[RMDB]
RNA sequence: GGGAACGACUCGAGUAGAGUCGAAAAUUGUGCUUUACAGACUUGAACUCAGAGAAGGAUGAGCUUGGAAAUGCCCAGGGUUCCAUGAUGGUAAGCAUCAAAUUUUUCAAAAGAUGUAAGAAAAGAAAAAUGAAGUCUGAUGCACCCACAAGCACAAGAUUUAGGGAUUAUUCGUAAUCCCUAAAUCAAAAGAAACAACAACAACAAC
Reactivity to 2A3 in 0.01 (KOAc 150mM, MgCl2 10mM, bicine 150mM(pH8.5), 24C), signal-to-noise 4, nucleotides 027 to 156: u040u030g010u010g010c010u040u030u090a060c050a030g030a050c010u050u080g050a110a020c010u030c070a060g040a010g030a260a070g110g010a060u090g030a020g040c030u060u050g050g020a020a130a050u120g020c000c020c030a040g030g040g000u040u000c020c010a010u140g010a030u050g020g060u070a070a050g010c000a000u020c010a010a050a100u030u060u020u030u030c030a020a020a070a100g070a050u130g060u210a070a060g040a110a140a020a030g040a000a070a010a010a000u060g030a080a030g040u030c040u040g010a050u030g000c010a050c000c010c000a040c030a020a000g000c010a010c000a010a030
Reactivity to DMS in 0.01 (KOAc 150mM, MgCl2 10mM, bicine 150mM(pH8.5), 24C), signal-to-noise 2, nucleotides 027 to 156: u010u010g040u000g000c020u010u010u020a200c030a140g000a090c020u000u010g000a060a080c020u010c040a110g020a150g010a170a100g020g010a160u030g050a060g010c020u010u020g030g000a070a130a110u010g010c000c010c030a080g030g030g000u000u000c060c030a130u010g010a100u010g030g050u000a050a210g010c000a030u000c050a030a040a130u000u000u020u020u000c040a020a080a180a180g000a080u000g000u000a060a210g040a080a090a080a220g000a060a130a040a070a180u000g030a060a020g010u010c000u000g000a080u000g010c020a080c000c010c020a040c180a060a030g030c060a050c030a070a170

Chemical mapping of a 207-nucleotide RNA with 2A3 and DMS.
It was measured as part of the RMDB library OK3TST.
The RNA was probed in 150 mM KOAc, 10 mM MgCl2 and 150 mM bicine (pH 8.5) at 24 C.
For 2A3, 2,596 sequencing reads were counted.
2A3 adducts were read by reverse transcription with SuperScript II with manganese.
Values cover nucleotides 27 to 156.